[RMDB]
Record summary
Conditions: 150 mM KOAc, 10 mM MgCl2 and 150 mM bicine (pH 8.5), 24 C. An RNA of 170 nucleotides, treated with 2A3 and DMS and read out base by base. 2A3 adducts were read by reverse transcription with SuperScript II with manganese. For DMS, 8,592 sequencing reads were counted. The 2A3 profile rests on 7,017 reads.

RNA sequence: GGGAACGACUCGAGUAGAGUCGAAAAUUUAUGGAUAAACAAGUGCACCAAGUUCAGUUAACAGACAAAUACUGCAGUGUUAAUGUAGUAGCUUGGCUUUACGCAGCAAUACUUAAUGGUUGCGCUUACGCCCACGACUUCGGUCGUGGGAAAAGAAACAACAACAACAAC
Reactivity to 2A3 in 0.01 (KOAc 150mM, MgCl2 10mM, bicine 150mM(pH8.5), 24C), signal-to-noise 4, nucleotides 027 to 129: u070u110u090a240u170g080g020a050u110a050a080a020c060a040a040g010u020g030c000a010c020c000a030a030g010u010u020c030a000g000u030u020a060a000c030a050g040a060c000a050a030a050u030a020c030u030g020c020a030g010u020g040u300u130a130a100u030g020u040a050g010u020a000g040c090u000u060g070g030c000u020u040u080a040c110g000c020a050g040c060a080a020u010a120c000u010u160a050a000u090g000g000u050u050g000c000g000c000u040u030a020c020g030
Reactivity to DMS in 0.01 (KOAc 150mM, MgCl2 10mM, bicine 150mM(pH8.5), 24C), signal-to-noise 4, nucleotides 027 to 129: u000u000u000a100u030g010g030a190u050a070a080a080c120a000a000g030u000g030c030a070c050c020a000a000g030u000u000c050a080g000u140u060a070a000c180a050g030a060c060a020a040a060u000a050c050u010g020c040a040g000u050g030u080u050a000a000u010g000u030a010g010u010a050g020c090u050u030g000g050c060u020u080u000a000c150g010c100a130g000c130a010a020u040a040c010u020u050a050a070u000g000g010u020u090g040c010g010c030u000u020a100c000g020